[RMDB]
RNA sequence: GGGAACGACUCGAGUAGAGUCGAAAAGAUAUGGAUUCCACCUGCUCUUGGACCCACGUGUCGGAAACGACACCGUGGCUAGAGCAGUGGAAUCCUAAGUCAAAAGAUCUGAGUUCGCUCAGAUCAACUGUAUCGGCAUGUUCGCAUGCCGAUACAGAAAAGAAACAACAACAACAAC
Reactivity to DMS in 0.01 (KOAc 150mM, MgCl2 10mM, bicine 150mM(pH8.5), 24C), signal-to-noise 2, nucleotides 027 to 126: g000a030u000a300u000g010g000a020u000u000c000c000a060c230c110u010g010c010u000c000u010u020g040g040a130c300c010c000a000c000g020u000g000u040c000g000g000a090a110a240c000g000a000c000a000c130c150g040u000g010g030c060u020a010g000a010g030c010a000g040u010g000g000a010a000u000c000c010u000a000a070g000u000c080a090a070a120a200g000a010u000c000u010g020a010g000u010u010c300g000c000u000c000a010g000a000u000c000a040a080
Reactivity to 2A3 in 0.01 (KOAc 150mM, MgCl2 10mM, bicine 150mM(pH8.5), 24C), signal-to-noise 1, nucleotides 027 to 126: g030a030u080a050u120g020g020a010u000u070c010c000a060c070c250u070g000c010u010c030u170u300g180g160a300c020c020c000a020c000g010u000g010u000c020g030g020a110a090a130c000g000a010c000a000c000c250g000u020g010g000c020u000a030g000a010g030c000a000g030u030g000g000a000a000u000c000c000u000a040a020g020u000c070a070a090a000a140g010a000u010c000u000g020a010g050u080u220c300g040c090u000c000a000g030a030u000c010a000a020